[RMDB]
This 177-nucleotide RNA was probed chemically with 2A3 and DMS. The reactions ran in a buffer of 150 mM KOAc, 10 mM MgCl2 and 150 mM bicine (pH 8.5), at 24 C. For DMS, 4,743 sequencing reads were counted. For DMS the reverse transcriptase was MarathonRT. It was measured as part of the RMDB library TTRDES.
RNA sequence: GGGAACGACUCGAGUAGAGUCGAAAAGAUAUGGAACUCAAGAGCGAUAAGCCUUCAUUCGGAAACGAAUGAGGCUUUUGACGCUCGAAAGUUCCUAAGUCAAAAGCAGCGACUUCGGUCGCUGCAACUAAUAGAGCUGGUUCGCCAGCUCUAUUAGAAAAGAAACAACAACAACAAC
Reactivity to 2A3 in 0.01 (KOAc 150mM, MgCl2 10mM, bicine 150mM(pH8.5), 24C), signal-to-noise 2, nucleotides 027 to 126: g010a020u040a040u110g010g010a000a000c000u020c100a120a060g010a010g000c020g090a110u080a240a000g000c030c000u300u270c010a020u020u000c000g030g000a010a090a050c030g000a000a000u000g020a000g000g010c010u010u000u030u030g010a000c000g000c000u000c000g000a000a020a000g020u000u000c000c010u010a020a000g050u020c030a030a110a130a050g030c000a010g030c000g050a020c020u110u240c300g140g000u010c000g020c030u010g020c000a000a000
Reactivity to DMS in 0.01 (KOAc 150mM, MgCl2 10mM, bicine 150mM(pH8.5), 24C), signal-to-noise 4, nucleotides 027 to 126: g000a020u010a260u000g000g000a010a000c000u010c020a030a300g010a010g010c000g010a130u010a020a010g010c000c010u010u010c010a000u000u010c000g010g000a060a050a080c010g000a010a010u000g000a020g000g010c000u000u000u000u010g020a170c080g010c010u000c000g000a120a090a010g010u000u000c000c000u000a010a110g000u000c020a110a070a120a170g030c000a020g000c020g000a010c000u000u020c240g030g030u000c000g030c000u010g010c010a010a030